[RMDB]
RNA sequence: GGGAACGACUCGAGUAGAGUCGAAAAGACACACGUGCUACAAUGGCAUAUACAAUGAGACGCAAUACCGCGAGGUGGAGCAAAUCUAUAAAAUAUGUCCCAGUUCGGAUUGUUCUCUGCAACUCGACCCUAGUGAUGAGUUCGCUCAUCACUAGGGAAAAGAAACAACAACAACAAC
Reactivity to 2A3 in 0.01 (KOAc 150mM, MgCl2 10mM, bicine 150mM(pH8.5), 24C), signal-to-noise 1, nucleotides 027 to 126: g000a010c000a000c000a010c070g030u090g050c000u080a030c040a130a090u170g010g000c010a000u050a000u020a040c110a050a060u130g010a000g020a000c080g000c010a020a030u020a030c010c010g000c050g070a060g000g050u030g000g020a010g000c000a010a020a040u020c010u030a020u120a080a100a050a010u030a010u020g020u070c000c020c010a050g000u050u060c000g010g050a080u000u090g000u070u100c030u010c040u040g050c040a080a060c020u000c050g070a100
Reactivity to DMS in 0.01 (KOAc 150mM, MgCl2 10mM, bicine 150mM(pH8.5), 24C), signal-to-noise 1, nucleotides 027 to 126: g010a100c070a070c120a120c190g020u010g040c000u000a140c070a190a210u010g000g000c010a020u010a070u000a050c200a110a130u030g000a020g000a240c250g000c040a000a140u020a020c050c000g010c230g010a070g020g000u000g000g000a300g020c020a060a190a010u000c010u000a120u000a020a110a050a020u000a080u000g010u000c020c040c160a100g000u010u020c030g010g000a050u000u000g010u000u000c060u000c040u020g010c020a070a080c020u000c070g000a300